[RMDB]
RNA sequence: GGGAACGACUCGAGUAGAGUCGAAAACGGAAGCAUUAAAACCAUUCGAGCUAGUCAAUGCGUGGCGUGUCUCUCCGCGGCGUGUUGGCGAAUGUAAAGAGUGACUAAGCAUGUAGUACCGAGGAUGAUAAGAGCAAUUCGUUCGCGAAUUGCUCAAUCCUCGUAGGUUGUUCGCAACCUACGAGGAAAAAGAAACAACAACAACAAC
Reactivity to DMS in 0.01 (KOAc 150mM, MgCl2 10mM, bicine 150mM(pH8.5), 24C), signal-to-noise 1, nucleotides 027 to 156: c100g030g030a140a040g000c080a030u000u000a020a070a130a190c070c020a060u000u000c050g020a250g010c060u000a070g000u000c010a020a040u010g000c030g010u030g010g080c020g030u020g000u000c120u000c010u010c220c000g020c040g030g000c020g000u000g010u000u010g010g020c070g000a090a030u000g020u020a010a080a150g000a100g050u000g000a020c020u010a050a160g060c020a050u000g020u010a110g000u000a090c090c060g000a130g000g010a120u000g020a110u040a100a110g000a030g030c010a020a000u000u000c040g020u000u010c300g040c020g000a010a010u020u010g010c000u010c040a010a030
Reactivity to 2A3 in 0.01 (KOAc 150mM, MgCl2 10mM, bicine 150mM(pH8.5), 24C), signal-to-noise 2, nucleotides 027 to 156: c030g030g030a040a010g000c040a030u140u090a070a040a080a040c050c020a030u050u090c040g020a020g020c060u060a000g020u010c000a000a000u010g000c000g000u010g190g020c030g030u060g050u020c030u000c000u000c170c000g010c010g010g010c000g000u070g010u000u000g030g000c000g000a030a020u060g010u050a080a090a000g030a010g010u040g010a000c030u050a000a050g060c040a050u110g040u140a040g020u040a040c000c090g040a070g050g010a050u150g000a010u100a170a160g010a000g000c000a000a000u000u000c000g010u010u060c150g010c020g080a000a000u000u000g000c000u000c000a000a000
This 207-nucleotide RNA was probed chemically with DMS and 2A3. Conditions: 150 mM KOAc, 10 mM MgCl2 and 150 mM bicine (pH 8.5), 24 C. As a SHAPE reagent, 2A3 marks flexible, mostly unpaired nucleotides at the ribose 2'-OH.